[RMDB]
RNA sequence: GGGAACGACUCGAGUAGAGUCGAAAAGUUUGCACCUGGCGCAAUACCAAUACCACCAACUUGUGCAGCUAAAGCAUCUGAAAUAUAGUCACCAUUCAAGUUCAUAGUUGCUACAACAUCAUGCUCACUUCCAAUUGUUGUUCGCAACAAUUGGAAGAAAAGAAACAACAACAACAAC
Reactivity to 2A3 in 0.01 (KOAc 150mM, MgCl2 10mM, bicine 150mM(pH8.5), 24C), signal-to-noise 3, nucleotides 027 to 126: g010u050u060u090g050c050a070c040c110u040g120g000c060g040c000a020a040u030a120c000c010a030a020u030a060c000c020a040c010c030a000a050c060u050u030g080u060g050c050a060g000c050u100a160a020a030g010c010a010u050c050u060g030a020a150a000u140a020u020a040g110u060c010a020c130c000a040u080u080c020a090a040g030u020u060c020a020u040a120g030u010u010g060c020u070a030c020a080a010c000a040u160c030a040u130g080c030u060c030a070
Reactivity to DMS in 0.01 (KOAc 150mM, MgCl2 10mM, bicine 150mM(pH8.5), 24C), signal-to-noise 3, nucleotides 027 to 126: g000u000u000u000g030c020a080c110c110u000g010g010c060g030c070a040a040u000a120c100c050a070a160u000a150c060c030a070c060c060a020a080c090u000u000g020u000g030c040a040g040c050u010a040a150a110g020c020a040u000c080u000g010a070a100a020u020a120u010a030g010u010c050a060c040c030a090u000u000c130a070a050g020u010u010c040a070u000a050g030u000u000g000c030u020a040c080a040a070c050a030u000c070a050u000g030c050u000c090a170